[RMDB]
RNA sequence: GGGAACGACUCGAGUAGAGUCGAAAACGGUUGUUCGCAACCGACUAGCUCCUAAGUCACGGAGAGCGACGUUUCGAUUCGAUAAGUCUCGGAAACGAGACUUUUGACGAAUGCGUCGUGGCUCCGUGAUAUGGACAUAACUUGGGUUCGCCCAAAACGUAGAGUUAAUCUUCGGAUUAACUCUACGAAAAGAAACAACAACAACAAC
Reactivity to DMS in 0.01 (KOAc 150mM, MgCl2 10mM, bicine 150mM(pH8.5), 24C), signal-to-noise 3, nucleotides 027 to 156: c020g000g000u000u010g030u000u000c200g030c030a040a040c020c010g000a040c060u000a220g000c080u020c000c040u000a050a260g030u000c000a030c010g000g010a040g000a300g020c020g010a030c000g020u000u010u000c000g010a170u010u000c020g010a060u000a020a010g010u000c000u000c010g010g000a160a140a250c010g000a030g000a010c010u000u000u000u000g020a060c050g000a030a010u010g040c020g020u000c010g050u000g000g020c000u000c000c010g020u010g000a010u000a170u020g000g000a060c040a090u000a060a110c080u010u000g020g020g000u000u000c080g000c000c000c000a020a030a110a260
Reactivity to 2A3 in 0.01 (KOAc 150mM, MgCl2 10mM, bicine 150mM(pH8.5), 24C), signal-to-noise 9, nucleotides 027 to 156: c020g020g000u010u010g030u080u070c250g020c110a000a000c010c000g010a020c030u040a050g040c070u020c000c010u070a180a040g010u010c000a000c000g010g000a010g000a010g010c010g000a010c000g000u000u020u060c100g050a260u090u020c020g040a030u020a250a010g000u000c000u000c000g030g050a100a100a060c010g000a000g000a000c000u000u000u000u030g030a020c010g010a020a030u130g030c010g010u000c010g000u020g040g030c000u000c000c000g010u000g000a000u000a000u010g000g000a000c030a100u220a130a040c050u030u020g030g000g030u130u110c120g090c010c000c060a020a120a010a010
The record gives the reactivity of an RNA of 207 nucleotides to DMS and 2A3. For DMS the reverse transcriptase was MarathonRT. For DMS, 6,108 sequencing reads were counted. The RNA was probed in 150 mM KOAc, 10 mM MgCl2 and 150 mM bicine (pH 8.5) at 24 C.